[RMDB]
RNA sequence: GGGAACGACUCGAGUAGAGUCGAAAAGAUAUGGAUGAUGGGACAUGCUGCGGGAUCGGAAACGAUCCUACAGCAACAGCCCAUAUCCUAAGUCAAAGGCUAGGACUUCUUCGGAAGUCCUAGCCAACUGAGAGGAUUUGUUCGCAAAUCCUCUCAGAAAAGAAACAACAACAACAAC
Reactivity to DMS in 0.01 (KOAc 150mM, MgCl2 10mM, bicine 150mM(pH8.5), 24C), signal-to-noise 1, nucleotides 027 to 126: g000a030u010a280u000g000g020a020u010g020a000u000g000g000g000a040c080a260u000g010c000u000g010c010g000g000g030a020u010c010g020g000a110a060a210c010g000a020u000c000c000u000a020c000a000g000c010a020a010c160a160g000c010c000c030a040u000a000u000c000c000u000a000a130g000u000c050a080a090a120g010g020c010u000a000g000g010a000c000u000u000c020u000u010c190g000g020a010a000g000u000c000c000u010a000g010c010c010a010a010